[RMDB]
RNA sequence: GGGAACGACUCGAGUAGAGUCGAAAACAAGCUUGAGGCCAGCUAAUUGAAAGGCCGAACCUAAAGAAAUGGGGGUGCCAGACAAAGUAUGAGGGUGGCAAACCAAGCCAUGUUCGGUAAGCCACGGACGUCUCUAAAUAUUCGUAUUUAGAGACGUAAAAGAAACAACAACAACAAC
Reactivity to 2A3 in 0.01 (KOAc 150mM, MgCl2 10mM, bicine 150mM(pH8.5), 24C), signal-to-noise 6, nucleotides 027 to 126: c010a010a010g010c010u050u070g040a050g020g040c010c010a030g020c050u060a080a190u160u120g050a080a010a010g020g020c000c000g000a000a010c000c010u110a160a110a110g110a080a200a160u190g000g010g000g000g080u140g010c000c000a010g000a050c030a030a100a000g060u080a140u200g070a080g040g080g020u010g000g000c000a000a020a040c020c010a020a000g020c010c050a090u160g090u070u050c010g000g020u020a030a020g010c000c010a030c020g010g030
Reactivity to DMS in 0.01 (KOAc 150mM, MgCl2 10mM, bicine 150mM(pH8.5), 24C), signal-to-noise 9, nucleotides 027 to 126: c060a110a120g010c010u000u000g010a220g010g010c010c020a020g010c010u000a100a150u000u010g010a030a170a140g000g010c000c010g010a080a160c050c040u000a060a080a130g010a080a090a080u000g000g010g010g000g030u010g020c010c020a030g000a270c070a030a040a060g000u000a080u010g010a130g010g010g020u010g000g010c020a040a120a180c060c040a040a070g010c020c080a060u000g000u000u000c100g010g010u010a060a240g010c010c020a050c090g010g010
Description:
An RNA of 177 nucleotides, treated with 2A3 and DMS and read out base by base. DMS adducts were read by reverse transcription with MarathonRT. The 2A3 profile rests on 11,139 reads. For 2A3 the reverse transcriptase was SuperScript II with manganese.